[RMDB]
RNA sequence: GGGAACGACUCGAGUAGAGUCGAAAAGAUAUGGACGUGAGGUGGGAGCUGGUCGGAAACGACCCAGCAUCGAUCACCCACGUCCUAAGUCAAAAGGAAUAGGAACACUUCGGUGUUCCUAUUCCAAUCAGCUUUAAAGGUUCGCCUUUAAAGCUGAAAAAGAAACAACAACAACAAC
Reactivity to DMS in 0.01 (KOAc 150mM, MgCl2 10mM, bicine 150mM(pH8.5), 24C), signal-to-noise 3, nucleotides 027 to 126: g010a040u000a300u010g000g010a000c010g020u000g050a090g050g020u000g010g020g010a050g000c000u000g000g010u010c000g000g010a070a080a090c000g010a020c140c040c030a010g000c010a170u000c130g000a060u010c010a010c000c010c000a000c010g010u010c000c000u000a000a060g020u000c030a070a060a130a160g000g010a010a000u000a000g000g010a040a020c000a010c000u000u020c220g020g000u010g000u000u000c000c000u000a000u000u000c000c010a020a050
Reactivity to 2A3 in 0.01 (KOAc 150mM, MgCl2 10mM, bicine 150mM(pH8.5), 24C), signal-to-noise 1, nucleotides 027 to 126: g000a020u070a010u080g000g020a000c000g020u000g030a290g070g010u010g000g110g000a000g040c010u000g000g000u010c010g030g000a060a030a040c020g000a020c020c050c060a000g000c000a190u260c030g090a070u080c010a010c020c000c000a010c010g030u010c000c000u000a020a020g020u000c010a030a000a050a100g010g000a000a010u030a020g020g000a000a000c030a010c040u100u150c300g000g000u000g000u000u000c000c020u030a000u010u000c000c000a000a030